Source: RMDB library OK2TST, as collected in RNAgym.
An RNA of 177 nucleotides, treated with DMS and read out base by base.
For DMS the reverse transcriptase was MarathonRT.
For DMS, 916 sequencing reads were counted.
RNA sequence: GGGAACGACUCGAGUAGAGUCGAAAAACUCGUAGGCCCGGCGCUCAUCAUUGAAGGUAUCCAGCACGAUCCCCACCCAGUCAUCGUCCCAAAGGCGAUCCCGGUCCCGGUAGAAAGCGCGGAUCUGGAGGGAGAACGAAUUCGUUCGUUCUCCCUCAAAAGAAACAACAACAACAAC
Reactivity to DMS in 0.01 (KOAc 150mM, MgCl2 10mM, bicine 150mM(pH8.5), 24C), signal-to-noise 1, nucleotides 027 to 126: a100c050u000c050g050u000a090g010g000c020c040c070g010g020c100g010c060u000c020a040u010c110a090u010u010g030a100a050g000g000u000a140u010c060c070a080g010c060a030c100g010a100u000c020c020c010c060a120c040c040c000a080g010u020c070a030u000c080g000u000c030c000c100a080a100a100g010g000c080g010a050u000c030c010c020g000g080u000c010c000c020g030g000u000a110g010a030a090a140g010c040g020c060g030g010a030u000c030u000g000